[RMDB]
Structure probing data (DMS and 2A3) for a 207-nucleotide construct.
The RNA was probed in 150 mM KOAc, 10 mM MgCl2 and 150 mM bicine (pH 8.5) at 24 C.
Values cover nucleotides 27 to 156.
Reactivities are rounded to 0.1 and cut off at 0 and 3.

RNA sequence: GGGAACGACUCGAGUAGAGUCGAAAAGGGGUCGUGGGAGAGAUUGUAUCGCUUUGAUCUAUACUGAAGCCUCCACGGUAUAGGGAGCGAGUAGAUCUCAUCGAUCACGACGGAGGCACCCAAAACAUUAGGUUUGUCUUCGGACAAACCUAAUGAACUAGUGUCCAUUGUUCGCAAUGGACACUAGAAAAGAAACAACAACAACAAC
Reactivity to DMS in 0.01 (KOAc 150mM, MgCl2 10mM, bicine 150mM(pH8.5), 24C), signal-to-noise 1, nucleotides 027 to 156: g040g000g060g000u000c000g060u010g000g000g000a040g020a070g010a060u000u000g020u020a300u010c020g010c020u000u020u000g000a040u000c000u000a030u000a050c020u000g010a020a120g000c000c000u010c010c010a300c080g000g020u000a030u000a000g010g000g000a000g040c020g020a040g000u020a300g010a030u000c020u000c020a220u000c090g000a050u000c030a020c050g010a040c040g040g010a030g120g070c020a120c020c010c000a060a070a080a250c010a060u000u000a000g000g020u000u000u000g000u000c010u020u010c300g060g040a010c000a000a020a000c000c000u010a020a000u000g020a120a260
Reactivity to 2A3 in 0.01 (KOAc 150mM, MgCl2 10mM, bicine 150mM(pH8.5), 24C), signal-to-noise 4, nucleotides 027 to 156: g020g020g110g030u020c010g010u010g010g010g020a050g010a000g010a010u030u120g150u300a090u060c020g010c020u300u190u010g000a010u030c000u000a000u000a010c000u010g050a120a010g010c000c000u000c000c000a010c020g000g000u000a000u000a010g000g000g000a000g020c010g000a010g030u110a000g010a000u000c000u000c010a050u300c010g010a000u030c000a000c000g000a000c000g000g010a000g010g010c000a030c000c010c020a050a100a020a020c010a000u010u000a010g000g000u000u010u010g000u000c010u020u100c300g060g000a000c000a000a000a010c010c000u000a000a000u000g010a010a010